[RMDB]
Description:
Structure probing data (DMS and 2A3) for a 177-nucleotide construct. DMS adducts were read by reverse transcription with MarathonRT. DMS (dimethyl sulfate) methylates the pairing face of unpaired adenines and cytosines. Values are in units of 0.01, from 0 to 300, in steps of 10.
RNA sequence: GGGAACGACUCGAGUAGAGUCGAAAACGGAGGUCGCGGUGCGAAUGGCGCGCGCGACGCCGCGCCCGAUGUCCUGGACUUGGCCGAUCCGAUACGCCGCCUUCACGAACGGUCGAGCGGCGUUGAGCUUCCCUGUUACGUUCGCGUAACAGGGAAGAAAAGAAACAACAACAACAAC
Reactivity to DMS in 0.01 (KOAc 150mM, MgCl2 10mM, bicine 150mM(pH8.5), 24C), signal-to-noise 4, nucleotides 027 to 126: c030g010g000a110g010g010u000c010g040c020g020g000u010g030c010g010a240a130u010g010g020c030g020c030g000c040g010c030g000a030c030g000c030c000g000c060g010c030c010c000g020a120u000g010u000c030c020u000g010g010a060c040u000u000g010g010c030c000g000a100u000c030c030g020a170u010a020c020g020c000c000g020c020c010u000u020c020a080c110g020a080a150c210g000g000u000c020g010a120g020c000g000g000c010g000u000u000g000a150g020
Reactivity to 2A3 in 0.01 (KOAc 150mM, MgCl2 10mM, bicine 150mM(pH8.5), 24C), signal-to-noise 3, nucleotides 027 to 126: c020g020g020a030g140g000u010c010g010c050g010g080u070g040c040g110a270a240u260g290g030c010g000c050g000c000g010c020g110a010c000g000c010c000g000c010g060c000c000c000g020a120u090g030u070c010c050u060g030g050a080c020u020u070g010g000c020c000g050a070u010c020c010g020a030u020a120c000g000c000c010g010c010c000u040u040c120a210c270g160a300a040c100g050g010u010c030g010a060g030c010g000g000c000g000u000u010g000a020g010